[RMDB]
Conditions: 150 mM KOAc, 10 mM MgCl2 and 150 mM bicine (pH 8.5), 24 C.
Chemical mapping of a 207-nucleotide RNA with 2A3 and DMS.
It was measured as part of the RMDB library OK3TST.
High 2A3 reactivity points to a flexible backbone, as in loops and unpaired stretches.
DMS (dimethyl sulfate) methylates the pairing face of unpaired adenines and cytosines.
For 2A3, 680 sequencing reads were counted.
The DMS profile rests on 2,732 reads.
RNA sequence: GGGAACGACUCGAGUAGAGUCGAAAAAGUAAAAAAGCCAUGUUGCAAAGGGAUGCAUGAAAGUGUGAAUUAAUAUGAUCGUUGUUUAUAAACAAUCUGCCACACAUGUUAAUGCUGAGAAAAUCUAGAGGUCUUGGCUAAGAUGGUUCAUAGAGAAUAUUACCCCACGAUUCGUCGUGGGGUAAUAAAAAGAAACAACAACAACAAC
Reactivity to 2A3 in 0.01 (KOAc 150mM, MgCl2 10mM, bicine 150mM(pH8.5), 24C), signal-to-noise 2, nucleotides 027 to 156: a000g020u070a000a030a060a060a040a000g060c040c000a090u080g030u080u040g070c040a060a000a010g110g000g000a060u020g010c050a000u030g070a110a060a090g020u000g000u010g040a030a000u190u150a100a050u220a100u290g040a090u020c070g000u010u020g030u040u100u060a100u130a000a070a000c010a010a020u020c010u080g030c030c000a000c000a000c010a010u010g050u020u050a050a010u020g030c030u020g010a010g110a080a060a000a030u090c060u140a040g010a010g100g060u000c030u010u000g000g000c010u010a030a010g070a020u060g000g000u020u000c020a030u100a040g080a000g080a110a000
Reactivity to DMS in 0.01 (KOAc 150mM, MgCl2 10mM, bicine 150mM(pH8.5), 24C), signal-to-noise 2, nucleotides 027 to 156: a160g040u040a030a060a030a090a110a070g040c020c030a100u000g000u000u010g000c040a050a050a100g000g050g020a130u000g000c020a000u000g030a040a060a240g030u010g020u010g010a080a130u000u000a070a180u000a050u000g010a020u000c070g030u000u000g000u000u010u010a130u000a160a030a040c030a040a020u000c010u010g030c050c030a060c020a020c010a040u010g010u000u010a090a030u010g010c030u000g000a210g000a060a050a060a080u000c080u010a080g010a060g000g010u000c020u000u010g050g010c020u000a040a070g010a030u010g010g000u000u000c050a090u000a110g010a130g000a080a230